Source information: This 177-nucleotide RNA was probed chemically with 2A3 and DMS. Conditions: 150 mM KOAc, 10 mM MgCl2 and 150 mM bicine (pH 8.5), 24 C. DMS adducts were read by reverse transcription with MarathonRT. Values cover nucleotides 27 to 126. For 2A3, 1,491 sequencing reads were counted.
RNA sequence: GGGAACGACUCGAGUAGAGUCGAAAAUCUGUUGGUGCAAGUCGAAGCGAUCACGGCGCGAAACGACCCACGUAAGUCUCCAUGUCCUCAAGCCGCCUCGGAGGACGAAGGAGUGGCAGGGCCUCCAUAGCUUAGGAAACUUCGGUUUCCUAAGCUAAAAAGAAACAACAACAACAAC
Reactivity to 2A3 in 0.01 (KOAc 150mM, MgCl2 10mM, bicine 150mM(pH8.5), 24C), signal-to-noise 1, nucleotides 027 to 126: u000c020u010g030u020u060g070g010u050g000c040a000a070g000u040c030g060a130a010g060c030g020a050u010c020a030c090g050g030c010g000c000g000a050a010a040c060g030a100c010c000c020a040c050g040u050a060a000g090u010c000u000c000c000a110u250g020u010c000c010u030c030a030a040g040c040c010g010c020c010u020c030g030g010a040g010g000a000c000g000a080a060g010g070a010g000u040g010g000c020a010g000g000g030c000c000u000c040c000a100
Reactivity to DMS in 0.01 (KOAc 150mM, MgCl2 10mM, bicine 150mM(pH8.5), 24C), signal-to-noise 2, nucleotides 027 to 126: u050c020u010g020u020u010g000g020u020g020c100a120a050g000u000c080g000a080a230g010c050g010a060u000c090a050c070g000g020c010g020c030g000a040a100a110c100g000a110c050c010c000a100c060g000u010a050a130g040u010c000u000c010c000a100u020g000u000c010c010u000c030a060a120g010c040c040g010c040c020u030c090g000g010a020g010g000a000c000g030a080a110g010g000a060g030u010g020g000c090a080g000g010g000c000c010u000c040c050a180